[RMDB]
RNA sequence: GGGAACGACUCGAGUAGAGUCGAAAAGCUCUAGGAGACUAGAGCGAUACGUUAGAGAGCUCGUGGCACGACUAACGGAUAGCCAGGUACGAGGUUGCCAGAGGACAUAGCUAUAGCUAUGUCCAAAGAGCAUACAUAGGUUCGCCUAUGUAUGCUCAAAAGAAACAACAACAACAAC
Reactivity to 2A3 in 0.01 (KOAc 150mM, MgCl2 10mM, bicine 150mM(pH8.5), 24C), signal-to-noise 5, nucleotides 027 to 126: g000c000u010c000u000a000g010g020a080g050a090c000u000a000g000a000g010c000g000a010u030a010c020g000u010u010a030g020a020g030a020g100c020u020c080g140u170g040g000c020a000c020g030a080c020u040a040a000c020g030g010a100u060a040g200c020c030a040g040g050u090a090c100g050a090g140g060u150u070g020c000c010a010g030a110g080g000a000c000a000u000a000g000c010u150a050u070a300g000c000u010a000u020g000u000c000c000a000a000a000
Reactivity to DMS in 0.01 (KOAc 150mM, MgCl2 10mM, bicine 150mM(pH8.5), 24C), signal-to-noise 4, nucleotides 027 to 126: g020c000u000c000u000a010g000g000a170g000a160c000u000a010g010a000g000c000g020a080u020a020c040g000u010u000a030g000a240g010a130g010c030u000c060g000u020g020g010c030a120c050g000a190c030u000a020a040c000g000g000a100u020a080g030c000c020a130g000g000u020a100c060g010a050g040g010u010u000g000c080c020a150g010a300g000g010a040c020a020u010a000g000c000u010a140u020a160g020c000u000a010u000g000u010c000c010a000a020a090